Structure probing data (DMS and 2A3) for a 177-nucleotide construct. It was measured as part of the RMDB library OK1LIB.
RNA sequence: GGGAACGACUCGAGUAGAGUCGAAAAGUUGUGCCGAAGAUCCUUCAGGUAGAUACGCCAAAAUACACGAAAAGCACGUCAGUGCUUAAUACGAGCGCAAUCGUAUUCUUAUAAUUGACGAGUGAACGAGUAAUUAAUGCUUCGGCAUUAAUUACUCAAAAGAAACAACAACAACAAC
Reactivity to DMS in 0.01 (KOAc 150mM, MgCl2 10mM, bicine 150mM(pH8.5), 24C), signal-to-noise 5, nucleotides 027 to 126: g010u010u010g030u000g010c020c010g000a040a060g000a090u010c040c020u010u010c020a110g000g040u010a060g030a080u020a040c130g000c050c050a060a110a090a080u070a100c120a090c120g000a040a060a050a090g020c030a040c000g010u010c100a050g000u020g000c140u000u000a020a040u000a040c010g000a010g010c210g020c180a100a110u010c010g010u010a000u000u000c160u000u000a080u040a080a060u010u010g000a030c050g020a110g000u010g000a100a100c190
Reactivity to 2A3 in 0.01 (KOAc 150mM, MgCl2 10mM, bicine 150mM(pH8.5), 24C), signal-to-noise 6, nucleotides 027 to 126: g060u050u050g020u030g040c030c010g020a080a040g080a200u080c040c020u080u100c070a020g000g010u040a040g050a090u120a040c020g040c050c010a080a030a000a050u240a020c150a030c060g110a100a080a010a020g020c010a000c000g100u140c100a040g020u010g010c000u010u010a000a010u030a000c010g000a020g040c110g000c250a030a060u020c000g000u010a010u020u010c050u080u200a190u030a180a180u150u080g030a040c020g020a020g060u100g060a090a040c090